[RMDB]
RNA sequence: GGGAACGACUCGAGUAGAGUCGAAAAUAAAAAGAUCGAAAGAUCAAAAGGCGUACAUGUUGUCGACCUUCACGUGGUGUGCGCUGUCAACUGACUGCUGUCAGGUUAACAGACAACAUAAAAAAAAUCUUAAUCUCAAGUUCGCUUGAGAUUAAGAAAAAGAAACAACAACAACAAC
Reactivity to 2A3 in 0.01 (KOAc 150mM, MgCl2 10mM, bicine 150mM(pH8.5), 24C), signal-to-noise 1, nucleotides 027 to 126: u180a000a070a010a020a000g010a000u010c010g030a090a040a000g000a000u000c030a000a070a030a020g000g010c000g000u010a010c010a020u040g000u000u000g010u020c010g000a000c010c010u100u070c130a110c140g120u140g040g000u000g020u010g010c000g000c010u010g050u020c000a100a090c020u000g010a000c000u120g140c110u120g150u010c010a000g000g070u000u050a000a010c010a020g020a010c000a000a000c000a000u240a000a020a010a000a000a000a000a000
Reactivity to DMS in 0.01 (KOAc 150mM, MgCl2 10mM, bicine 150mM(pH8.5), 24C), signal-to-noise 2, nucleotides 027 to 126: u020a050a070a050a140a100g010a000u010c000g010a160a110a180g000a030u000c010a070a020a070a050g010g020c010g020u000a020c020a110u000g010u010u010g010u000c000g010a040c010c010u000u010c180a060c200g000u020g000g000u000g000u000g000c020g030c000u000g040u000c140a060a120c020u010g000a010c000u000g010c280u010g010u000c000a030g000g010u000u010a030a010c040a050g000a010c000a030a020c020a090u030a000a010a000a020a080a090a040a100

This 177-nucleotide RNA was probed chemically with 2A3 and DMS. For 2A3, 1,954 sequencing reads were counted. The DMS profile rests on 1,752 reads.